[RMDB]
RNA sequence: GGGAACGACUCGAGUAGAGUCGAAAAAUACAUUCCUGUGCCGGCAAUACAGUGUGUAUGGAGGUCUCAAUGGCUCGGAAGUGCCAGCAAACCGGCGUAGAUAUUAGCAGACCUAUGGGCGUAAGACAAAAGAGAAUGAUGUUCGCAUCAUUCUCAACCAAUAUGCUAUGUUCGCAUAGCAUAUUGGAAAAGAAACAACAACAACAAC
Reactivity to 2A3 in 0.01 (KOAc 150mM, MgCl2 10mM, bicine 150mM(pH8.5), 24C), signal-to-noise 4, nucleotides 027 to 156: a000u130a020c060a050u050u080c020c000u030g020u050g040c030c010g040g000c070a110a050u090a120c060a090g080u050g030u030g000u170a050u050g060g050a030g020g030u000c010u000c060a090a180u040g020g010c010u030c050g070g040a120a060g030u030g080c000c010a030g030c060a030a050a040c020c010g000g000c020g000u040a030g040a110u070a060u190u110a020g040c050a000g020a090c000c010u020a090u030g040g020g010c070g000u080a060a050g060a070c050a030a100a020a010g000a000g000a000a000u000g010a000u000g030u060u070c210g020c080a000u000c000a000u000u010c000u000c000a000a000
Reactivity to DMS in 0.01 (KOAc 150mM, MgCl2 10mM, bicine 150mM(pH8.5), 24C), signal-to-noise 2, nucleotides 027 to 156: a130u000a100c040a100u010u000c300c020u000g030u000g030c010c000g000g000c030a130a080u000a030c030a060g010u000g020u000g010u010a040u000g010g010a070g020g010u000c020u000c020a130a110u000g020g050c020u000c050g000g010a150a150g010u000g020c010c040a100g000c080a040a130a090c030c010g020g020c020g000u000a090g000a080u000a150u010u000a120g030c050a100g020a060c030c010u000a090u000g010g010g020c040g000u010a050a140g020a110c040a060a090a100a100g010a020g000a060a010u010g000a020u010g020u000u010c300g010c000a010u000c020a010u000u000c010u000c000a030a070